[RMDB]
RNA sequence: GGGAACGACUCGAGUAGAGUCGAAAAAGUUAGAGUAGGAGGAAUAGAUAGAGAAGUGAGAGUAGGUAUAGCGCACUUUAUGGAGGGUGAAUAUAGAAUAUACAUAGAAGGUAUACCGAUAACAGUCACUUCGUGCGUUUUUCGAAACGCACGAAGUAAAAGAAACAACAACAACAAC
Reactivity to 2A3 in 0.01 (KOAc 150mM, MgCl2 10mM, bicine 150mM(pH8.5), 24C), signal-to-noise 1, nucleotides 027 to 126: a020g050u000u000a030g000a000g110u030a050g000g040a000g000g090a050a020u050a100g060a140u020a000g050a000g000a040a040g120u090g000a200g030a000g110u070a000g200g000u050a010u020a150g080c050g020c080a060c000u120u000u070a030u040g180g000a030g050g000g000u080g010a020a000u290a000u000a080g080a110a080u270a000u030a000c110a000u200a030g180a010a000g020g000u000a000u000a020c020c060g000a000u030a020a140c150a020g150u000c050
Reactivity to DMS in 0.01 (KOAc 150mM, MgCl2 10mM, bicine 150mM(pH8.5), 24C), signal-to-noise 1, nucleotides 027 to 126: a080g000u010u010a060g000a130g030u000a090g010g000a010g000g000a070a010u040a130g010a120u010a050g040a060g010a070a000g000u000g010a030g000a260g020u000a080g000g020u000a030u000a070g010c050g000c140a080c050u000u000u030a020u000g000g000a060g010g000g030u000g000a030a100u000a070u000a070g000a060a130u100a010u030a070c070a060u020a030g020a050a050g000g000u000a000u000a010c130c010g000a130u010a040a060c210a000g000u010c130